[RMDB]
RNA sequence: GGGAACGACUCGAGUAGAGUCGAAAAGGGACGUUGACGAAAUGGAGCGAUUUGACCCGUCUUGAAACACGGACCAAGGAGUCUAACAUGUGUGCAAGUGUUAGGGUGUGGAAACCCCAGCGCGAAAAUUAUGACCGCCAUUCGUGGCGGUCAUAAUAAAAGAAACAACAACAACAAC
Reactivity to DMS in 0.01 (KOAc 150mM, MgCl2 10mM, bicine 150mM(pH8.5), 24C), signal-to-noise 2, nucleotides 027 to 126: g000g000g000a080c070g000u020u000g010a150c110g020a030a060a070u070g050g000a060g000c020g000a060u010u010u060g000a100c000c050c000g020u040c050u000u000g010a170a060a060c070a090c160g000g000a150c050c020a070a080g010g000a260g000u000c020u030a060a010c130a070u030g030u010g030u000g000c070a100a080g030u000g000u010u010a030g000g040g000u060g000u000g040g000a110a070a130c030c000c000c050a050g020c010g030c140g000a060a030a090
Reactivity to 2A3 in 0.01 (KOAc 150mM, MgCl2 10mM, bicine 150mM(pH8.5), 24C), signal-to-noise 1, nucleotides 027 to 126: g020g050g000a000c020g000u050u030g010a120c020g050a060a000a140u230g000g000a140g070c000g170a200u070u000u200g040a050c000c000c000g000u000c000u000u000g050a070a070a070c030a000c000g040g000a000c030c020a030a160g040g000a240g060u000c000u000a000a000c050a080u090g080u000g010u050g090c100a250a040g000u010g030u000u000a040g000g060g010u020g000u000g000g100a120a130a150c000c000c020c000a000g000c000g010c000g000a050a110a000